This 207-nucleotide RNA was probed chemically with 2A3 and DMS. DMS adducts were read by reverse transcription with MarathonRT. The reactions ran in a buffer of 150 mM KOAc, 10 mM MgCl2 and 150 mM bicine (pH 8.5), at 24 C. The DMS profile rests on 3,390 reads. 2A3 adducts were read by reverse transcription with SuperScript II with manganese.

RNA sequence: GGGAACGACUCGAGUAGAGUCGAAAAGCGCUUGCGUUAAACUUUGAAGAUGUCUUUUAAGUGUGUUGCCAGUGGGCAUACUGUGGUAAGCAUGGUGUGCGAGAAGGGAUGAACCUUUAAGCGGGCUAAGGAGUCUUAUGCAAGGUGAGUGAAUCCGCCUUGCGUAACUGUUCGCAGUUACGCAAGGAAAAGAAACAACAACAACAAC
Reactivity to 2A3 in 0.01 (KOAc 150mM, MgCl2 10mM, bicine 150mM(pH8.5), 24C), signal-to-noise 3, nucleotides 027 to 156: g030c040g010c030u050u090g020c010g060u060u110a110a150a050c010u000u010u130g010a040a040g060a080u130g080u090c050u010u120u020u120a070a060g020u050g010u030g020u120u050g030c030c010a070g010u110g020g010g000c010a030u040a030c060u050g000u020g030g060u070a050a050g110c000a010u030g000g000u020g040u030g010c040g010a060g030a050a030g020g000g020a020u090g080a050a030c000c000u000u040u020a040a000g020c010g010g020g010c010u020a030a050g050g000a030g010u000c020u070u070a040u060g020c040a040a000g020g040u030g020a020g000u050g040a040a020u020c000c010g000
Reactivity to DMS in 0.01 (KOAc 150mM, MgCl2 10mM, bicine 150mM(pH8.5), 24C), signal-to-noise 2, nucleotides 027 to 156: g010c050g000c050u000u000g010c020g020u000u000a020a100a050c010u000u000u000g000a170a130g000a050u010g010u010c020u000u000u000u000a030a170g020u010g010u000g030u000u000g010c020c030a130g020u020g000g010g000c050a030u000a010c050u000g050u010g020g000u000a060a150g020c030a040u010g020g040u010g020u000g020c010g040a200g000a090a080g010g010g000a160u000g020a100a050c050c020u010u010u010a070a100g020c080g010g000g010c050u010a070a110g050g000a060g000u000c020u000u010a000u000g000c040a050a020g010g030u000g010a120g040u000g010a140a100u010c020c030g000